[RMDB]
The data come from the RNA Mapping Database (RMDB), library OK1LIB. This 177-nucleotide RNA was probed chemically with 2A3 and DMS. The reactions ran in a buffer of 150 mM KOAc, 10 mM MgCl2 and 150 mM bicine (pH 8.5), at 24 C.

RNA sequence: GGGAACGACUCGAGUAGAGUCGAAAAGAGCUCGAUGCUGAUUCCAAUUCGCAUUGGAAUCAGCUUCUACUUAUACGCUAAUGAGUAGAUUCAGGCUUAGCGUAGUUUGAAAGCUAGCAUCGAGCUAGAUAGUUAUGUUAUUCGUGACAUAGCUAUCAAAAGAAACAACAACAACAAC
Reactivity to 2A3 in 0.01 (KOAc 150mM, MgCl2 10mM, bicine 150mM(pH8.5), 24C), signal-to-noise 9, nucleotides 027 to 126: g150a000g000c000u000c000g000a000u000g000c020u030g000a000u000u000c000c000a000a010u210u230c180g080c210a030u000u010g000g000a000a000u000c000a000g010c000u000u000c000u000a000c000u060u090a050u020a110c050g030c080u050a070a070u140g040a030g060u150a080g070a140u130u140c070a050g150g000c010u010u010a010g000c020g040u040a080g080u080u140u150g150a120a040a000g000c010u020a010g000c000a000u000c000g000a000g000c000u000a010
Reactivity to DMS in 0.01 (KOAc 150mM, MgCl2 10mM, bicine 150mM(pH8.5), 24C), signal-to-noise 9, nucleotides 027 to 126: g010a030g010c000u000c000g010a010u000g010c000u000g000a010u000u000c000c000a010a020u000u020c270g010c260a200u000u000g000g000a010a000u000c010a070g000c010u000u000c010u000a040c050u010u020a120u010a040c130g010c070u010a050a040u020g010a050g010u010a070g010a120u040u010c100a100g010g000c090u000u010a020g010c010g020u020a040g010u020u020u010g000a060a030a030g010c000u020a040g000c000a000u000c000g000a010g000c000u000a030

For 2A3, 114,607 sequencing reads were counted.